[RMDB]
An RNA of 207 nucleotides, treated with 2A3 and read out base by base.
Values cover nucleotides 27 to 156.
2A3 adducts were read by reverse transcription with SuperScript II with manganese.
The RNA was probed in 150 mM KOAc, 10 mM MgCl2 and 150 mM bicine (pH 8.5) at 24 C.
RNA sequence: GGGAACGACUCGAGUAGAGUCGAAAAUGGUAACGUAUAUGGCGUUCCUGAGCACACGAGUUCCCUUUCAUUGAAAGAAACAAAUAACUCGGACGCAGGUUAUACUGAACCGUAUAGACUUUACAAUGUAGAUCUUUUUGAGUAUGAGGUUGAUUCAGCGUAAAUACGCUUUCGAGCGUAUUUACGCAAAAGAAACAACAACAACAAC
Reactivity to 2A3 in 0.01 (KOAc 150mM, MgCl2 10mM, bicine 150mM(pH8.5), 24C), signal-to-noise 1, nucleotides 027 to 156: u040g070g000u030a030a000c030g000u000a020u000a000u110g040g000c010g000u120u000c000c000u080g000a050g000c160a010c000a040c110g190a170g060u090u130c110c010c000u000u020u000c180a250u120u190g110a000a000a000g000a000a030a000c020a000a030a000u300a010a030c000u000c050g000g020a000c060g030c000a000g230g270u000u000a000u000a040c010u040g170a110a010c000c000g000u000a010u000a000g010a000c000u000u000u000a000c030a100a220u230g020u070a050g010a300u030c000u010u300u110u000u140g030a010g020u210a200u140g000a020g080g080u100u070g040a060u130u040c030a000